An RNA of 177 nucleotides, treated with DMS and read out base by base. It was measured as part of the RMDB library OK2TST. The DMS profile rests on 1,312 reads. DMS adducts were read by reverse transcription with MarathonRT.

RNA sequence: GGGAACGACUCGAGUAGAGUCGAAAAGAAUAAGUGAGAUGUGAAAGCUCUUGAACGUUUUAAUUGACCUGAAGCAGUUCUUUUAACACGUUUAGCUGCUCCGCGGUGAGUUUUCAUUUUUGGCAUAUCAUGCAUGGCGAUUCGUCGCCAUGCAUGAAAAAGAAACAACAACAACAAC
Reactivity to DMS in 0.01 (KOAc 150mM, MgCl2 10mM, bicine 150mM(pH8.5), 24C), signal-to-noise 1, nucleotides 027 to 126: g010a180a060u020a060a110g020u000g020a130g000a040u020g020u000g010a020a030a030g020c010u000c050u020u000g020a030a020c010g010u030u000u000u000a010a050u000u010g000a070c110c000u010g030a130a140g020c190a030g000u000u000c010u010u000u000u000a010a020c050a020c020g000u000u000u000a170g010c030u000g030c020u020c080c190g030c010g020g010u000g000a000g010u000u000u020u000c030a010u010u000u000u000u010g000g020c040a060u000a090